[RMDB]
RNA sequence: GGGAACGACUCGAGUAGAGUCGAAAAGGAGACAGAAACAGGAACAUAGUUAGAAAACAAGAAUGCGGUGCAGCCAGAGAAUCACAGGAGAUGAGGGGAUGGGUGUGUUGGUUACCAACCCACACCCCAUUGUCUAUUGCUUCGGCAAUAGACAAUGAAAAGAAACAACAACAACAAC
Reactivity to DMS in 0.01 (KOAc 150mM, MgCl2 10mM, bicine 150mM(pH8.5), 24C), signal-to-noise 9, nucleotides 027 to 126: g020g010a070g020a060c050a050g000a070a070a060c090a070g010g010a090a050c110a090u020a100g010u010u010a070g000a110a070a080a080c110a080a100g010a080a060u020g000c080g000g030u010g000c050a060g000c030c040a060g000a060g010a080a060u020c060a050c070a070g000g010a070g000a040u010g010a070g000g010g000g000a070u010g010g010g010u000g010u000g010u040u030g010g000u000u020a170c180c110a070a110c010c000c000a020c060a020c010c000c010
Reactivity to 2A3 in 0.01 (KOAc 150mM, MgCl2 10mM, bicine 150mM(pH8.5), 24C), signal-to-noise 8, nucleotides 027 to 126: g060g020a040g010a020c040a030g080a030a110a000c050a050g030g080a070a020c020a090u100a030g050u070u060a040g130a060a130a010a010c060a010a060g090a110a060u140g040c050g040g000u040g010c020a010g040c020c010a020g010a000g020a060a040u100c020a030c020a090g060g030a060g010a050u080g040a020g010g020g010g000a030u060g010g000g000u020g000u000g010u040u200g020g020u040u070a140c030c040a020a030c000c000c000a000c000a000c000c010c000

Structure probing data (DMS and 2A3) for a 177-nucleotide construct. Values cover nucleotides 27 to 126. 2A3 adducts were read by reverse transcription with SuperScript II with manganese. The data come from the RNA Mapping Database (RMDB), library OK1LIB.